An RNA of 207 nucleotides, treated with 2A3 and DMS and read out base by base.
[RMDB]
RNA sequence: GGGAACGACUCGAGUAGAGUCGAAAAGGAUGAUCUGGGCCCGGCCAGUGAUCCGAAUUAGUACCGGGAUUGCAUCGUCGAGCCGUCAGGGGCGAAGACGAGAACCUGAAAGCACGAAGCACCGGGCGGUGCGAGUGCGAGAUAUAACGCCCAACAAGAUAGCUCAUUAUUUCGAUAAUGAGCUAUCAAAAGAAACAACAACAACAAC
Reactivity to 2A3 in 0.01 (KOAc 150mM, MgCl2 10mM, bicine 150mM(pH8.5), 24C), signal-to-noise 2, nucleotides 027 to 156: g030g000a030u100g020a100u120c000u000g000g000g020c010c000c000g000g010c000c000a040g000u060g070a020u020c020c010g020a050a050u140u050a110g070u090a080c000c000g010g000g010a020u030u190g070c030a050u020c000g020u000c000g030a030g010c010c000g070u170c190a060g130g000g100g000c000g020a040a010g000a000c010g000a000g010a000a010c010c010u070g040a110a060a010g020c010a000c000g040a070a020g000c000a010c040c030g080g130g000c080g000g010u010g000c010g020a010g000u000g000c000g010a010g020a000u100a010u010a040a060c070g020c000c000c000a060a030c050a040a060
Reactivity to DMS in 0.01 (KOAc 150mM, MgCl2 10mM, bicine 150mM(pH8.5), 24C), signal-to-noise 3, nucleotides 027 to 156: g010g040a070u020g000a060u020c050u000g000g030g020c010c030c020g050g010c020c040a090g020u020g000a090u000c050c030g020a090a130u010u010a120g020u010a070c030c030g000g020g000a130u010u010g010c030a190u070c020g020u000c000g010a300g020c000c010g020u010c160a200g030g030g010g050c010g020a110a220g010a070c000g000a100g020a060a060c040c050u000g000a080a070a180g000c020a030c010g020a200a300g010c040a040c010c000g020g020g010c100g040g020u000g030c020g000a230g020u010g010c000g000a050g000a120u000a070u010a060a100c000g020c010c000c020a070a090c140a160a280
The 2A3 profile rests on 2,147 reads. Values are in units of 0.01, from 0 to 300, in steps of 10. The DMS profile rests on 4,615 reads. The RNA was probed in 150 mM KOAc, 10 mM MgCl2 and 150 mM bicine (pH 8.5) at 24 C.